[RMDB]
Structure probing data (2A3) for a 207-nucleotide construct.
The 2A3 profile rests on 666 reads.
Conditions: 150 mM KOAc, 10 mM MgCl2 and 150 mM bicine (pH 8.5), 24 C.
Values cover nucleotides 27 to 156.
Source: RMDB library M2RFPK, as collected in RNAgym.
RNA sequence: GGGAACGACUCGAGUAGAGUCGAAAAGGGGCUGACAGGAAUCGACAGUAAAGUGUAUCAUGUCAGUAAGCAUGCCGGGGAAUGGUGGUUUACCCCGUUAUCAAAUGAUUACCGACCAAUAAUUGGCUUAGCUCGUUGGGCUUCGGCCCAACGAGAAGACAAGUCAGAUCUUCGGAUCUGACUUGUCAAAAGAAACAACAACAACAAC
Reactivity to 2A3 in 0.01 (KOAc 150mM, MgCl2 10mM, bicine 150mM(pH8.5), 24C), signal-to-noise 1, nucleotides 027 to 156: g020g030g010g000c000u000g000a000c000a000g000g060a090a160u090c100g100a000c070a060g070u230a090a080a070g160u180g020u040a080u100c040a020u010g010u000c020a000g000u050a060a040g120c070a060u160g100c040c000g000g000g000g000a010a010u020g020g000u020g000g010u050u060u100a040c010c000c010c010g090u070u050a010u020c000a000a010a030u020g010a050u020u100a010c010c030g100a060c050c040a010a050u230a080a090u090u100g060g000c070u070u080a040g030c000u000c000g000u000u010g000g000g000c000u000u000c130g070g000c000c000c000a000a000c000g000a010g010a000a000